Structure probing data (DMS) for a 177-nucleotide construct.
RNA sequence: GGGAACGACUCGAGUAGAGUCGAAAAGAUAUGGACUUCAGCGAUGAUGUACCACGCGAUAAGACCAGUGUCGGAAACGACACGGUCUUUUGACGCGUCCCUACAUCAUCGCUGAAGUCCUAAGUCAGAUAUGCUCUGAGUUCGCUCAGAGCAUAUCAAAAGAAACAACAACAACAAC
Reactivity to DMS in 0.01 (KOAc 150mM, MgCl2 10mM, bicine 150mM(pH8.5), 24C), signal-to-noise 2, nucleotides 027 to 126: g010a070u010a300u000g000g010a000c020u000u000c000a000g010c000g010a010u000g000a030u000g020u000a010c090c180a020c020g040c000g020a120u000a040a020g000a010c010c010a220g020u000g020u000c010g010g000a090a100a270c000g020a000c000a000c000g020g000u000c000u000u000u000u000g010a210c080g000c000g000u010c040c090c080u000a000c000a000u000c000a000u000c000g000c000u000g000a000a000g000u000c000c000u000a020a070g010u010c050a120
Source: RMDB library TTRINS, as collected in RNAgym. DMS adducts were read by reverse transcription with MarathonRT.